[RMDB]
An RNA of 177 nucleotides, treated with 2A3 and DMS and read out base by base. The RNA was probed in 150 mM KOAc, 10 mM MgCl2 and 150 mM bicine (pH 8.5) at 24 C. The 2A3 profile rests on 1,021 reads. The DMS profile rests on 1,357 reads. It was measured as part of the RMDB library OK2TST.
RNA sequence: GGGAACGACUCGAGUAGAGUCGAAAACACCAUUUUCUUCGGCGAUUUCUGCGAUUGUGGCCCCGGAACGAAUACGUUCUUGGAUCUCGCGUGGGCGCAUUGAUAAUGGCGUAGAUAAACGAGGAUCUCCUUGUCCAGUGUUCGCACUGGACAAGGAAAAAGAAACAACAACAACAAC
Reactivity to 2A3 in 0.01 (KOAc 150mM, MgCl2 10mM, bicine 150mM(pH8.5), 24C), signal-to-noise 1, nucleotides 027 to 126: c010a000c000c000a000u020u000u070u000c010u000u050c060g180g000c000g070a040u000u140u020c000u060g030c010g060a060u090u140g090u120g150g000c000c000c000c020g050g000a000a000c000g030a170a060u270a200c050g000u000u020c000u020u020g040g000a020u000c030u030c030g080c000g000u080g020g030g010c010g060c050a020u030u110g050a020u070a050a060u100g020g000c020g000u010a070g000a180u130a100a190a000c070g030a040g030g080a070u030c010
Reactivity to DMS in 0.01 (KOAc 150mM, MgCl2 10mM, bicine 150mM(pH8.5), 24C), signal-to-noise 1, nucleotides 027 to 126: c070a060c010c000a040u010u010u000u000c020u000u010c270g030g010c000g010a030u000u000u020c010u000g000c000g010a100u000u010g020u030g030g000c030c010c000c030g030g000a000a010c000g030a250a210u010a150c030g030u000u000c000u000u000g020g000a070u000c020u000c020g000c010g010u010g020g010g000c000g000c000a160u000u000g000a030u000a020a020u000g000g000c020g010u000a050g000a120u020a030a090a130c100g000a120g000g010a150u000c140